[RMDB]
RNA sequence: GGGAACGACUCGAGUAGAGUCGAAAACGCGUCCUGUUCGCAGGACGCGAAUUAAGGAAACCUUCCUGGUGGCGAGAAUAAAUGAGCACACGCGCUCAUAAAAUAGGUGGGCGUUCGCGCCCACCAAACCGUUCAAAUACUUCGGUAUUUGAACGGUAAAAGAAACAACAACAACAAC
Reactivity to DMS in 0.01 (KOAc 150mM, MgCl2 10mM, bicine 150mM(pH8.5), 24C), signal-to-noise 2, nucleotides 027 to 126: c020g010c010g030u000c000c000u000g000u000u020c230g030c020a030g000g010a000c020g020c000g030a010a020u000u010a100a030g000g000a070a080a120c080c050u000u000c010c040u000g010g010u010g010g000c040g000a130g010a080a070u000a050a090a030u010g000a010g020c010a110c180a070c270g030c170g000c010u000c020a000u010a050a020a070a130u000a100g020g030u000g000g000g020c010g040u000u050c270g000c010g020c020c000c000a010c000c000a000a070